[RMDB]
RNA sequence: GGGAACGACUCGAGUAGAGUCGAAAAGAUAUGGAUCUGUACGCACUGAUGACCUCGGAAACGAGCAAGGUGGUACUGGAUCCUAAGUCAAAAUCUUUAGUGCUGGGUUCGCCCAGCACUAAAGAAACUCAACUCAUAACUUCGGUUAUGAGUUGAGAAAAGAAACAACAACAACAAC
Reactivity to 2A3 in 0.01 (KOAc 150mM, MgCl2 10mM, bicine 150mM(pH8.5), 24C), signal-to-noise 2, nucleotides 027 to 126: g030a020u060a050u160g010g000a030u000c030u010g020u010a010c200g070c300a010c000u100g050a280u130g040a260c030c020u010c000g010g030a070a090a040c000g000a000g000c020a070a240g010g000u020g000g000u010a020c120u140g050g000a000u000c010c010u010a130a010g060u030c030a020a010a080a300u000c000u000u010u020a000g010u010g010c030u010g000g120g000u060u130c210g100c020c000c000a000g040c000a010c000u000a000a010a000g000a010a000a000
Reactivity to DMS in 0.01 (KOAc 150mM, MgCl2 10mM, bicine 150mM(pH8.5), 24C), signal-to-noise 3, nucleotides 027 to 126: g020a040u010a300u000g000g010a000u000c000u000g020u000a020c010g010c000a010c000u000g000a050u020g000a090c300c000u020c000g000g010a150a150a200c010g010a010g030c040a070a110g000g020u010g000g000u000a000c000u010g060g000a000u000c000c000u000a020a070g030u000c050a110a100a130a130u000c000u000u010u000a000g010u000g000c000u000g000g010g020u000u010c270g000c020c020c000a000g010c000a000c000u010a000a000a010g000a050a070a110